[RMDB]
RNA sequence: GGGAACGACUCGAGUAGAGUCGAAAAAUUGAAUACAAUAUUACCAUUUGGUAACACGUUGAAUUAAUGAAUGAAGACAUGGAGCAUCUACAGCUGCUAACAUCACAAAAAGAGGGAAAUCAGAAUGAUGUGGCUUCUGGUGAAAGAACAGCUUAGAAAUGACCCAAAAUUUCGAUUUUGGGUCAUUAAAAGAAACAACAACAACAAC
Reactivity to DMS in 0.01 (KOAc 150mM, MgCl2 10mM, bicine 150mM(pH8.5), 24C), signal-to-noise 2, nucleotides 027 to 156: a080u010u010g000a170a150u000a140c030a050a190u000a100u000u000a020c010c000a300u000u010u000g050g020u000a040a060c050a070c110g020u010u010g020a090a140u000u000a100a050u000g020a090a100u000g010a070a140g030a080c080a090u000g000g010a080g040c060a090u000c020u010a060c060a050g040c040u000g030c000u000a050a080c040a060u010c080a150c050a040a060a060a050a030g000a070g010g010g000a060a090a090u010c030a090g000a120a060u000g010a040u000g020u000g000g010c060u000u000c020u000g010g030u000g010a120a050a050g010a070a050c040a070g000c060u000u010a060g000a100
Reactivity to 2A3 in 0.01 (KOAc 150mM, MgCl2 10mM, bicine 150mM(pH8.5), 24C), signal-to-noise 3, nucleotides 027 to 156: a000u070u090g010a060a060u110a080c040a050a120u060a150u150u060a040c010c030a080u090u070u300g030g010u040a050a000c020a010c140g050u040u040g070a040a060u090u120a110a060u140g130a050a040u100g030a060a070g030a030c020a030u080g060g010a050g010c020a010u040c030u050a060c030a040g010c010u000g050c000u030a110a000c010a020u070c010a000c030a040a070a060a000a010g050a110g040g040g010a060a080a030u070c000a010g070a130a040u070g020a010u020g010u010g050g040c020u020u030c010u040g070g000u000g030a080a010a010g000a030a010c000a020g050c030u070u090a060g070a030

Chemical mapping of a 207-nucleotide RNA with DMS and 2A3.
For 2A3 the reverse transcriptase was SuperScript II with manganese.
The data come from the RNA Mapping Database (RMDB), library OK3TST.
The DMS profile rests on 3,962 reads.